[RMDB]
RNA sequence: GGGAACGACUCGAGUAGAGUCGAAAAAGAUCCGGGAACAACGCAAGCGGCAUCCAGGUUUCUUCCAGCGCCAUUGGCUUUUGCUUGCGAUAGCGCACGCGCUUCACAUGCCACACACGAUCCUGCGCAAUCAUAGUAGCUUCGGCUACUAUGAUUGAAAAGAAACAACAACAACAAC
Reactivity to 2A3 in 0.01 (KOAc 150mM, MgCl2 10mM, bicine 150mM(pH8.5), 24C), signal-to-noise 4, nucleotides 027 to 126: a000g080a070u030c020c020g020g000g030a070a030c060a050a020c050g020c050a040a040g030c010g060g000c030a010u020c040c000a030g060g000u030u100u020c030u130u030c040c020a040g030c020g020c030c020a120u090u110g050g030c020u030u080u090u200g010c020u030u030g020c010g040a040u050a010g050c060g000c020a030c060g050c010g000c010u100u070c030a070c010a050u100g000c000c000a030c000a000c000a000c100g020a020u040c010c000u070g030c050g010
Reactivity to DMS in 0.01 (KOAc 150mM, MgCl2 10mM, bicine 150mM(pH8.5), 24C), signal-to-noise 5, nucleotides 027 to 126: a060g000a080u010c010c010g010g000g000a080a090c080a100a120c060g020c050a050a050g020c040g010g000c080a060u010c050c040a080g000g000u010u000u000c050u000u000c080c040a090g010c150g020c020c040a090u000u010g010g000c060u000u000u010u010g000c040u000u000g010c020g000a080u010a040g010c030g000c070a110c140g000c050g010c030u010u010c040a050c080a060u000g010c020c020a040c080a060c090a070c090g000a070u010c030c010u000g030c110g000